[RMDB]
This 207-nucleotide RNA was probed chemically with 2A3 and DMS. The RNA was probed in 150 mM KOAc, 10 mM MgCl2 and 150 mM bicine (pH 8.5) at 24 C. 2A3 adducts were read by reverse transcription with SuperScript II with manganese. For DMS, 2,078 sequencing reads were counted. For DMS the reverse transcriptase was MarathonRT.

RNA sequence: GGGAACGACUCGAGUAGAGUCGAAAAUCAUCGAGAAGUAGGCUUAGGCCAAUUGCUUGGUGGUGAAAGUAGAGGGAAGGUAGCACUUCGACGCCUCUAAGUACGCUGUGGGAGUAGUGCUUAAAUCAAAAGCACAGCGACUUCGGUCGCUGUGCAACACAAAGGGUUCGUUCGCGAACCCUUUGUGAAAAGAAACAACAACAACAAC
Reactivity to 2A3 in 0.01 (KOAc 150mM, MgCl2 10mM, bicine 150mM(pH8.5), 24C), signal-to-noise 1, nucleotides 027 to 156: u020c000a000u030c000g000a010g000a160a000g030u070a030g010g000c030u110u040a080g150g000c010c010a050a160u120u050g020c000u010u000g000g000u010g000g030u060g040a060a040a000g060u080a010g030a060g050g040g000a060a020g040g020u050a010g030c060a050c080u000u030c060g120a090c050g140c000c000u000c010u020a040a030g010u020a040c050g000c110u050g010u090g070g050g000a060g020u130a010g010u020g030c020u010u080a030a100a030u100c070a010a110a000a000g010c000a000c000a000g000c000g000a000c000u010u040c160g060g000u000c000g000c000u000g000u000g000c000a000a020
Reactivity to DMS in 0.01 (KOAc 150mM, MgCl2 10mM, bicine 150mM(pH8.5), 24C), signal-to-noise 1, nucleotides 027 to 156: u000c030a050u010c040g030a070g050a030a030g010u010a070g020g030c010u020u020a280g000g040c000c020a030a040u010u020g010c030u000u010g000g040u000g020g020u000g000a080a080a170g000u000a050g020a070g000g010g050a080a070g030g010u000a110g040c060a040c030u000u010c060g020a100c060g000c040c010u000c020u020a040a130g000u000a040c050g000c010u040g020u010g000g020g010a190g010u000a040g010u010g010c010u000u000a060a040a140u000c090a070a060a060a180g010c010a030c000a020g040c000g000a040c030u000u000c220g010g000u010c000g060c000u030g050u020g010c000a050a080